[RMDB]
RNA sequence: GGGAACGACUCGAGUAGAGUCGAAAAAGCCGCUCUUCACCGCGAAGAGGCUUGCGUCAACACACUUGGUCCAUCGGACCAUGGCGCAGGCAGCUCCUGGCCUGGCAAGACCUUUGACCACGAAGCCAAUGACGGUUUCAUUCGUGAAACCGUCAUUAAAAGAAACAACAACAACAAC
Reactivity to 2A3 in 0.01 (KOAc 150mM, MgCl2 10mM, bicine 150mM(pH8.5), 24C), signal-to-noise 4, nucleotides 027 to 126: a000g040c020c010g040c000u030c010u030u040c020a060c060c100g050c090g040a010a020g000a030g030g000c000u000u010g000c010g010u020c020a130a060c070a040c030a040c260u040u050g000g010u000c020c030a220u170c260g010g000a000c000c000a010u010g000g010c010g000c010a010g000g000c010a010g030c000u020c000c020u040g010g020c000c010u010g020g000c030a070a030g040a170c010c000u050u050u060g070a070c000c010a010c050g040a060a020g040c000c040
Reactivity to DMS in 0.01 (KOAc 150mM, MgCl2 10mM, bicine 150mM(pH8.5), 24C), signal-to-noise 3, nucleotides 027 to 126: a040g010c020c130g000c030u020c020u020u000c000a100c110c080g030c130g010a100a060g000a020g010g010c000u000u000g020c010g050u000c030a090a080c150a110c180a100c200u030u010g000g000u000c000c010a190u010c230g010g030a010c000c000a040u010g000g010c000g020c010a000g000g020c000a110g010c040u010c020c030u000g000g010c060c010u000g010g010c050a080a040g000a090c040c000u000u000u000g020a110c010c030a080c070g020a110a130g000c080c100

The record gives the reactivity of an RNA of 177 nucleotides to 2A3 and DMS. It was measured as part of the RMDB libraries RFM100 and RFMREP. For DMS the reverse transcriptase was MarathonRT.